[RMDB]
RNA sequence: GGGAACGACUCGAGUAGAGUCGAAAACACAGAACGAGGGGAAAGGGUCACUGUGGAUCAAGCCAGGCUCCUCUGAGCAGUCCAGGGUCUAUUUACAGAGAGCAGCAAGUUCCUGGGACAGAGGAGACAUACAGGUUUACUUCGGUAAAUCUGUAUGAAAAGAAACAACAACAACAAC
Reactivity to 2A3 in 0.01 (KOAc 150mM, MgCl2 10mM, bicine 150mM(pH8.5), 24C), signal-to-noise 9, nucleotides 027 to 126: c040a000c010a010g080a100a030c040g010a070g030g020g000g030a050a070a050g060g010g010u030c020a010c060u030g020u040g050g020a050u080c050a060a020g060c020c020a040g060g010c000u000c010c000u000c000u010g040a050g080c090a020g080u030c000c000a000g010g010g010u010c030u080a170u070u250u110a080c080a040g120a010g020a020g150c070a010g020c020a060a060g040u070u070c000c000u000g000g000g000a010c000a000g000a000g000g000a000g000a000
Reactivity to DMS in 0.01 (KOAc 150mM, MgCl2 10mM, bicine 150mM(pH8.5), 24C), signal-to-noise 9, nucleotides 027 to 126: c070a080c090a070g010a070a070c090g010a110g000g010g000g000a050a040a060g000g000g010u010c050a070c050u000g010u010g000g010a070u020c080a080a120g010c040c050a090g010g000c000u000c010c000u000c000u000g000a110g020c130a120g010u030c010c010a010g000g000g010u010c030u010a080u030u030u030a120c180a110g000a110g000a080g010c080a070g000c120a090a050g010u010u010c000c000u000g000g000g000a080c010a010g000a010g000g000a020g000a090